[RMDB]
RNA sequence: GGGAACGACUCGAGUAGAGUCGAAAAGAUAUGGACCGUGACUCCGAGGAUCCGUAACAUCAAUCGGAAACGAUUGUGGGGGAGGAGCAAUGCGGUCCUAAGUCAAAGGUUGUGUUCGCACAACCAAGAAAUAACACGACUUCGGUCGUGUUAUUUCAAAAGAAACAACAACAACAAC
Reactivity to 2A3 in 0.01 (KOAc 150mM, MgCl2 10mM, bicine 150mM(pH8.5), 24C), signal-to-noise 2, nucleotides 027 to 126: g010a030u090a070u110g000g000a000c020c000g040u030g280a130c000u000c010c020g080a300g010g070a030u000c000c020g050u110a070a100c040a290u280c030a010a000u020c010g010g000a070a060a060c000g010a000u000u030g010u040g060g000g000g000g000a010g000g000a020g010c120a130a080u280g020c030g020g000u000c010c000u010a030a020g040u000c060a130a090a090g000g000u000u000g010u020g050u000u070c300g070c090a000c000a010a010c000c010a020a030
Reactivity to DMS in 0.01 (KOAc 150mM, MgCl2 10mM, bicine 150mM(pH8.5), 24C), signal-to-noise 2, nucleotides 027 to 126: g010a080u010a300u010g000g020a030c000c010g010u000g030a100c000u000c010c000g010a100g010g010a030u010c020c010g020u000a060a120c160a100u020c020a020a000u000c000g010g010a180a080a220c000g010a010u010u000g010u020g010g000g000g010g000a030g020g010a010g010c100a050a060u020g000c000g010g000u000c000c030u010a030a090g000u000c050a150a160a090g000g020u000u010g010u000g030u000u000c200g000c000a000c000a010a020c010c020a030a040

Chemical mapping of a 177-nucleotide RNA with 2A3 and DMS.
For DMS, 1,802 sequencing reads were counted.
DMS adducts were read by reverse transcription with MarathonRT.
Source: RMDB library TTRDEL, as collected in RNAgym.
The 2A3 profile rests on 3,357 reads.